[RMDB]
RNA sequence: GGGAACGACUCGAGUAGAGUCGAAAAAUCAUAAGCGCUAUAUAAAUCAUAUCCGGCGGCGUACGGUGAUUGUCUAGUAGGAGAUUUAGCUCUGUUAGUUUCCUUAACAAAUCUAACUGGUGAGUUAAGAUCAUCGAACAUUCGUGUUCGAUGAUCUAAAAGAAACAACAACAACAAC
Reactivity to DMS in 0.01 (KOAc 150mM, MgCl2 10mM, bicine 150mM(pH8.5), 24C), signal-to-noise 1, nucleotides 027 to 126: a090u010c020a100u000a190a150g010c090g020c020u000a060u000a040u000a090a050a050u010c120a030u000a120u010c040c040g030g010c070g010g060c040g040u000a020c040g000g000u000g000a040u020u000g020u010c050u010a040g020u010a120g010g010a070g010a070u000u000u010a100g000c030u010c040u000g020u010u010a060g020u000u000u000c030c030u010u020a060a020c070a040a060a010u010c010u010a080a070c150u010g000g020u000g000a220g000u000u000a090
Structure probing data (DMS) for a 177-nucleotide construct. Conditions: 150 mM KOAc, 10 mM MgCl2 and 150 mM bicine (pH 8.5), 24 C. DMS adducts were read by reverse transcription with MarathonRT. The data come from the RNA Mapping Database (RMDB), library OK2TST.